[RMDB]
RNA sequence: GGGAACGACUCGAGUAGAGUCGAAAAUGGCUACACACGAUCACAUCCCUCAUUUCAUCUUUCGGGUCUUCAGCUUGCCUCGCCUGAAUCACUGCACUCGUGUGGUGAGCGGGGGCUGCAUGGCUACCCUACGCAAGCAGUUCGCUGCUUGCGUAGGAAAAGAAACAACAACAACAAC
Reactivity to 2A3 in 0.01 (KOAc 150mM, MgCl2 10mM, bicine 150mM(pH8.5), 24C), signal-to-noise 5, nucleotides 027 to 126: u120g020g010c020u060a030c030a000c000a010c050g060a070u060c030a030c010a080u040c000c000c030u030c030a070u050u120u030c050a070u000c050u020u110u080c040g080g000g000u010c000u030u030c040a010g000c010u090u130g070c010c010u040c020g070c010c020u080g090a060a040u030c000a000c010u020g010c020a030c040u110c150g060u010g000u010g010g030u010g000a010g020c020g010g000g010g000g000c030u010g000c010a030u040g050g000c000u030a090c000
Reactivity to DMS in 0.01 (KOAc 150mM, MgCl2 10mM, bicine 150mM(pH8.5), 24C), signal-to-noise 1, nucleotides 027 to 126: u010g000g000c030u000a040c000a050c010a070c060g000a080u020c020a090c120a150u000c020c000c010u040c150a080u000u000u000c070a050u000c000u000u050u000c130g000g070g030u040c020u010u020c050a030g000c000u010u000g010c000c000u010c060g030c010c190u090g000a140a050u010c060a000c000u000g040c000a030c030u000c300g030u000g090u050g000g040u000g000a020g000c100g000g000g000g060g000c000u000g000c110a020u040g020g030c030u000a090c030
Source: RMDB libraries RFM100 and RFMREP, as collected in RNAgym. The record gives the reactivity of an RNA of 177 nucleotides to 2A3 and DMS. The DMS profile rests on 1,675 reads. Values cover nucleotides 27 to 126.